[RMDB]
Structure probing data (2A3 and DMS) for a 177-nucleotide construct.
The RNA was probed in 150 mM KOAc, 10 mM MgCl2 and 150 mM bicine (pH 8.5) at 24 C.
For 2A3, 2,211 sequencing reads were counted.
Source: RMDB library OK2TST, as collected in RNAgym.

RNA sequence: GGGAACGACUCGAGUAGAGUCGAAAAGCGCGCACCGGAUGCACGAGACGAGCCGUUUCACGCGCGACGCGCAAGGCGCGUGGCGCUACGUCGACGGCGAUGUAAGCGAGCGCUGAGUCCGCCGGUACUACGAGGAGUCAUUCGUGACUCCUCGUAGAAAAGAAACAACAACAACAAC
Reactivity to 2A3 in 0.01 (KOAc 150mM, MgCl2 10mM, bicine 150mM(pH8.5), 24C), signal-to-noise 2, nucleotides 027 to 126: g000c010g010c020g000c010a030c030c020g030g020a060u140g000c020a000c110g080a090g050a040c020g030a010g000c000c020g040u000u050u060c090a030c100g000c000g000c020g070a020c010g040c010g000c230a300a230g260g030c010g000c000g000u020g070g000c010g020c000u070a050c080g080u100c050g010a050c000g000g020c000g040a040u160g020u070a050a040g040c020g010a040g000c020g030c030u020g020a030g030u020c000c020g000c000c020g070g020u010a060
Reactivity to DMS in 0.01 (KOAc 150mM, MgCl2 10mM, bicine 150mM(pH8.5), 24C), signal-to-noise 2, nucleotides 027 to 126: g010c000g040c040g030c170a050c010c020g000g000a300u010g040c020a080c040g010a220g000a100c030g010a230g000c050c000g000u000u000u000c060a090c140g000c060g010c000g000a020c030g030c010g040c040a160a100g030g040c010g040c010g040u010g000g030c020g000c010u000a030c120g010u020c220g020a080c040g000g000c000g000a090u030g000u010a090a120g010c030g000a140g000c030g010c000u000g010a160g010u020c040c000g010c000c010g000g010u010a190